[RMDB]
RNA sequence: GGGAACGACUCGAGUAGAGUCGAAAACGGCAAGAACGCAUGCUCACUGAAGUAUGUGAGCAGUUCAUUAGUUGGAAACAACUAAUGAACAAAUGAAUACUUCUUCGUUUAAUGCGUUCUUGUCAAGGGUACGCUUACAUUUCGAUGUGAGCGUACCAAAAGAAACAACAACAACAAC
Reactivity to DMS in 0.01 (KOAc 150mM, MgCl2 10mM, bicine 150mM(pH8.5), 24C), signal-to-noise 2, nucleotides 027 to 126: c110g000g010c000a000a000g010a000a000c000g020c000a010u000g000c010u000c000a000c010u000g000a140a140g020u030a080u030g000u000g010a010g020c020a180g010u000u000c000a000u000u010a000g000u000u000g000g000a160a090a150c000a000a000c000u000a000a010u000g010a000a000c010a010a010a000u010g000a010a020u030a120c300u040u040c060u010u000c020g020u000u000u000a240a020u010g010c000g010u000u000c000u000u000g000u000c000a030a040g010
Reactivity to 2A3 in 0.01 (KOAc 150mM, MgCl2 10mM, bicine 150mM(pH8.5), 24C), signal-to-noise 9, nucleotides 027 to 126: c040g000g000c000a000a000g000a000a000c000g000c000a000u040g010c000u010c000a010c010u100g120a230a050g250u190a110u180g020u030g000a000g000c000a000g000u000u000c000a000u000u000a000g000u000u000g010g010a020a040a020c000a000a000c000u000a000a000u000g000a000a000c000a000a010a000u020g010a010a020u160a260c100u150u170c000u020u010c030g040u010u020u060a060a010u010g000c000g000u000u000c000u000u000g000u000c000a000a000g030